[RMDB]
RNA sequence: GGGAACGACUCGAGUAGAGUCGAAAAGUCCACUGGGUGGGUUCACAUCCCCAACCCGCGGGCCGGCUGUUCUUCUUUCUCUUUCCUCGUCUUCCUCGGUCAACCUCCGGAGUUCCUCUUCCUCCUCAUAGCGGACGGUUCGCCGUCCGCAAAAGAAACAACAACAACAAC
Reactivity to 2A3 in 0.01 (KOAc 150mM, MgCl2 10mM, bicine 150mM(pH8.5), 24C), signal-to-noise 4, nucleotides 027 to 129: g030u010c000c020a020c100u080g000g040g020u000g020g010g000u140u180c050a060c030a200u180c020c000c000c030a100a180c010c020c010g020c010g020g030g020c040c020g030g030c040u050g040u090u030c020u060u000c000u010u060u000c030u000c000u020u030u070c020c000u000c020g030u000c060u080u030c010c010u020c030g000g000u060c000a040a070c000c030u040c020c000g000g000a030g010u030u030c020c000u020c000u040u000c000c000u000c000c000u080c010a070u110a000
Reactivity to DMS in 0.01 (KOAc 150mM, MgCl2 10mM, bicine 150mM(pH8.5), 24C), signal-to-noise 3, nucleotides 027 to 129: g030u000c000c000a040c100u000g000g030g040u020g030g000g040u020u030c210a190c150a250u050c000c000c000c000a000a000c030c040c050g040c070g030g020g000c000c000g050g040c170u030g000u030u010c000u020u010c030u020u000u000c060u000c040u000u000u000c000c040u030c070g050u030c040u030u020c040c040u030c000g050g030u050c110a120a150c080c030u110c000c000g070g000a090g010u030u010c010c000u010c100u000u040c020c060u050c050c060u000c070a070u000a030
Annotation
An RNA of 170 nucleotides, treated with 2A3 and DMS and read out base by base. Reactivities are given for positions 27 through 129. DMS adducts were read by reverse transcription with MarathonRT. It was measured as part of the RMDB library 15KLIB. The DMS profile rests on 11,390 reads. For 2A3 the reverse transcriptase was SuperScript II with manganese.